[RMDB]
RNA sequence: GGGAACGACUCGAGUAGAGUCGAAAAAGUAAGUGUCUAAAAAUGACUUCACCUAGUCCUAGAAAGUAAAUUGAUUGACUGUCUAGAAUAAUUAUGUUUUCAGAAAUGUAUACCUUUGUAGUCCAUCGUGGAAUAUUGUAUAGCAUUGGAUUAAAAGCUUGCUUGAACUAUUCGUAGUUCAAGCAAGAAAAGAAACAACAACAACAAC
Reactivity to DMS in 0.01 (KOAc 150mM, MgCl2 10mM, bicine 150mM(pH8.5), 24C), signal-to-noise 1, nucleotides 027 to 156: a070g010u010a030a080g040u000g010u000c050u050a020a120a070a140a100u010g000a030c000u000u000c030a070c000c100u000a200g030u000c020c000u000a050g010a010a030a030g050u010a020a060a270u000u010g000a130u020u010g010a030c020u010g010u000c030u000a020g020a040a050u010a050a180u000u010a030u010g000u000u000u010u000c030a150g000a070a070a050u000g020u000a080u000a090c020c120u020u000u000g020u000a080g020u000c010c020a080u010c090g000u000g000g010a070a070u000a040u000u020g010u000a130u000a150g040c040a100u000u000g020g000a170u040u010a080a050a100a110g060
Reactivity to 2A3 in 0.01 (KOAc 150mM, MgCl2 10mM, bicine 150mM(pH8.5), 24C), signal-to-noise 3, nucleotides 027 to 156: a000g110u140a050a030g010u010g040u050c060u110a120a150a120a150a130u110g030a020c000u050u020c050a080c040c010u030a020g030u030c020c010u020a020g050a070a090a020g020u120a040a100a220u130u140g050a050u080u090g030a070c000u030g060u070c020u010a030g030a110a060u110a090a060u200u090a050u170g040u010u090u040u050c050a020g110a110a080a010u030g050u060a060u080a170c000c020u040u170u090g120u090a050g030u000c000c010a040u070c150g060u080g020g070a060a040u120a050u060u140g020u070a060u050a060g040c010a010u060u090g000g040a020u140u110a030a030a140a060g040